[RMDB]
Chemical mapping of a 177-nucleotide RNA with DMS and 2A3. The RNA was probed in 150 mM KOAc, 10 mM MgCl2 and 150 mM bicine (pH 8.5) at 24 C.
RNA sequence: GGGAACGACUCGAGUAGAGUCGAAAAUAAGACCUGCAGGUUUCUUAAUUGAACUUGUGGAUGUGAAUAUCAAGUUGCUAGUGGGCCAUACGGGGUAAGCUCGUCUGGCGAUGCGGGAUGAACCGAACUUACUUAAUGACUUCGGUCAUUAAGUAAGAAAAGAAACAACAACAACAAC
Reactivity to DMS in 0.01 (KOAc 150mM, MgCl2 10mM, bicine 150mM(pH8.5), 24C), signal-to-noise 6, nucleotides 027 to 126: u020a120a100g000a090c040c000u000g010c010a040g010g010u000u010u030c020u000u000a120a130u030u000g010a020a020c010u000u000g030u000g000g010a070u030g000u010g010a130a080u010a080u020c090a080a160g010u000u010g000c050u000a080g020u010g010g000g000c010c020a050u000a060c060g000g000g000g010u020a090a120g010c000u000c010g010u010c030u010g000g000c010g010a040u010g010c100g010g000g000a090u010g020a100a110c020c010g020a100a140
Reactivity to 2A3 in 0.01 (KOAc 150mM, MgCl2 10mM, bicine 150mM(pH8.5), 24C), signal-to-noise 7, nucleotides 027 to 126: u120a020a040g030a050c000c000u000g000c000a020g030g060u030u140u150c030u080u150a250a220u180u130g010a020a010c010u010u010g010u030g030g060a110u110g080u060g150a080a040u120a050u220c060a080a080g030u060u060g030c020u070a040g040u110g060g080g000c010c000a020u030a060c030g000g010g020g050u150a060a100g120c010u010c010g010u010c040u000g050g000c000g050a040u070g020c010g050g020g010a120u120g090a080a010c020c020g010a040a030